[RMDB]
An RNA of 177 nucleotides, treated with 2A3 and DMS and read out base by base.
RNA sequence: GGGAACGACUCGAGUAGAGUCGAAAAUCUGGGUGUGCUACUGCUGGCCCGCCCGUUCCAAGUUGCGUAGUGGACCGCCUGGGGCUUAUGCGAAAGCUGGGUCUCACGGUCCAUAAUGUGGCAGGCACACGCUAGGUAGUUUCGACUACCUAGCGUGAAAAGAAACAACAACAACAAC
Reactivity to 2A3 in 0.01 (KOAc 150mM, MgCl2 10mM, bicine 150mM(pH8.5), 24C), signal-to-noise 1, nucleotides 027 to 126: u160c090u080g000g000g030u040g010u000g090c000u000a180c010u080g060c100u110g000g020c020c020c000g000c000c020c000g000u040u000c010c020a000a080g050u070u160g100c080g000u010a060g050u030g000g000a000c010c000g110c050c090u030g000g050g000g030c000u020u010a100u260g000c050g050a120a000a000g000c000u000g000g000g040u010c000u010c000a000c020g000g000u040c000c000a000u000a000a000u030g000u000g040g000c070a050g010g080c040a000
Reactivity to DMS in 0.01 (KOAc 150mM, MgCl2 10mM, bicine 150mM(pH8.5), 24C), signal-to-noise 2, nucleotides 027 to 126: u010c130u020g000g020g030u000g000u000g020c070u020a110c160u020g030c150u010g000g000c010c020c000g020c010c010c010g020u010u030c040c020a100a120g020u000u000g010c050g050u040a230g000u000g000g000a010c030c000g010c180c170u010g000g010g000g000c000u000u010a000u020g020c000g000a080a100a110g010c000u010g000g000g000u000c000u010c000a020c010g000g000u020c000c000a000u000a030a040u000g000u000g000g010c040a090g000g010c150a180
The 2A3 profile rests on 932 reads.